Notes
An RNA of 177 nucleotides, treated with DMS and read out base by base. The reactions ran in a buffer of 150 mM KOAc, 10 mM MgCl2 and 150 mM bicine (pH 8.5), at 24 C.
RNA sequence: GGGAACGACUCGAGUAGAGUCGAAAACUCCCGAUUCCGUCCAUCCCCACCCCCUGAGGGUCGCCCAGGAAUGGCGGGACCCCACUCGACAGGGUCCGCGUACCAUCCUUUCUUACCUGAUGGCCGGGUAUUAAGUUUCCUUCGGGAAACUUAAUACAAAAGAAACAACAACAACAAC
Reactivity to DMS in 0.01 (KOAc 150mM, MgCl2 10mM, bicine 150mM(pH8.5), 24C), signal-to-noise 2, nucleotides 027 to 126: c210u000c000c000c000g010a130u010u010c000c000g010u000c000c000a030u030c000c000c010c010a260c010c010c010c000c020u010g010a100g020g020g000u010c020g030c010c020c010a060g000g010a060a050u000g030g010c080g010g010g000a020c010c010c000c060a110c080u010c200g000a100c180a210g000g010g010u000c020c010g050c040g000u000a070c030c000a020u010c000c020u000u010u020c060u010u000a100c210c110u010g010a090u000g000g030c020c010g000g000
Values cover nucleotides 27 to 126.